[RMDB]
RNA sequence: GGGAACGACUCGAGUAGAGUCGAAAAGAAACGAAAGGCCGCUGACCGACGGGAUAUUGUGGGGCUUACCACAGGGGACGCGGCGUUAUCACUUGCCUUUUAAGCCGACCGUCUGGGCUGCAUACAAACCACCCAACUAUCUUCGGAUAGUUGGGAAUCAUGGAGAAGUGUUCGCACUUCUCCAUGAAAAAGAAACAACAACAACAAC
Reactivity to 2A3 in 0.01 (KOAc 150mM, MgCl2 10mM, bicine 150mM(pH8.5), 24C), signal-to-noise 2, nucleotides 027 to 156: g000a010a010a000c070g040a030a020a020g100g000c020c010g000c050u040g030a070c010c020g040a020c020g040g030g080a100u090a110u280u150g010u030g010g020g040g120c110u100u110a050c000c010a000c000a010g020g000g000g000a000c020g000c000g110g000c000g010u020u010a030u060c020a030c060u030u060g000c000c010u060u060u060u120a050a020g000c000c010g020a100c000c020g000u050c010u090g030g000g000c030u020g000c010a010u100a120c120a000a110a040c010c040a080c010c000c000a000a000c000u000a000u040c000u020u080c110g070g000a010u000a000g000u010u000g000g000g000a000a030
Reactivity to DMS in 0.01 (KOAc 150mM, MgCl2 10mM, bicine 150mM(pH8.5), 24C), signal-to-noise 2, nucleotides 027 to 156: g000a090a070a110c100g020a080a050a140g000g000c000c010g000c060u010g000a190c050c010g030a080c040g010g000g010a100u010a050u000u000g010u000g000g020g010g030c110u000u010a060c050c020a040c020a080g050g000g000g010a150c080g010c010g000g010c050g020u000u010a040u000c020a140c040u010u000g010c000c070u000u000u000u000a080a080g020c020c010g030a060c050c040g010u000c010u040g010g020g040c030u000g040c050a170u040a130c090a090a080a060c010c030a180c000c000c000a010a020c000u000a010u000c000u000u000c300g030g010a030u000a000g010u000u000g000g000g000a000a010